An RNA of 177 nucleotides, treated with DMS and 2A3 and read out base by base. For 2A3 the reverse transcriptase was SuperScript II with manganese. In probing experiments dimethyl sulfate is read out at A N1 and C N3, which are open when not base-paired. The data come from the RNA Mapping Database (RMDB), library M2PK50. Conditions: 150 mM KOAc, 10 mM MgCl2 and 150 mM bicine (pH 8.5), 24 C.
RNA sequence: GGGAACGACUCGAGUAGAGUCGAAAAACCUGAUGAUUCGUCAUCAGGUCACAUGCCGCCCGAACGGCUUCCUGACCGGGCGGAUUCACUUAAAAUGGAGCACUGCUGCAUCAUUCGUGAUGCAGAAUACGGAUUGGGAAUUCGUUCCCAAUCCGUAAAAAGAAACAACAACAACAAC
Reactivity to DMS in 0.01 (KOAc 150mM, MgCl2 10mM, bicine 150mM(pH8.5), 24C), signal-to-noise 2, nucleotides 027 to 126: a030c010c000u000g000a020u010g030a010u010u020c090g000u010c000a000u000c000a040g010g000u020c070a050c160a140u000g000c010c010g000c000c000c010g000a050a170c070g000g000c010u000u000c020c010u020g010a130c240c000g000g010g000c000g010g010a020u000u000c070a040c170u000u020a050a100a070a070u000g000g000a030g000c010a130c300u010g000c020u000g000c000a010u010c000a040u000u020c270g010u010g030a010u000g010c000a000g000a060a080
Reactivity to 2A3 in 0.01 (KOAc 150mM, MgCl2 10mM, bicine 150mM(pH8.5), 24C), signal-to-noise 2, nucleotides 027 to 126: a010c000c000u000g000a000u000g000a000u010u100c130g080u000c120a000u000c000a020g000g000u040c020a080c000a050u140g000c000c000g000c000c000c010g000a010a010c100g060g000c000u160u140c010c010u000g030a010c000c050g000g000g030c020g000g010a030u100u080c040a040c110u100u280a050a040a080a120u140g010g000a010g040c010a010c130u130g010c010u000g000c000a020u000c000a000u040u120c150g120u040g000a000u000g000c000a010g040a020a010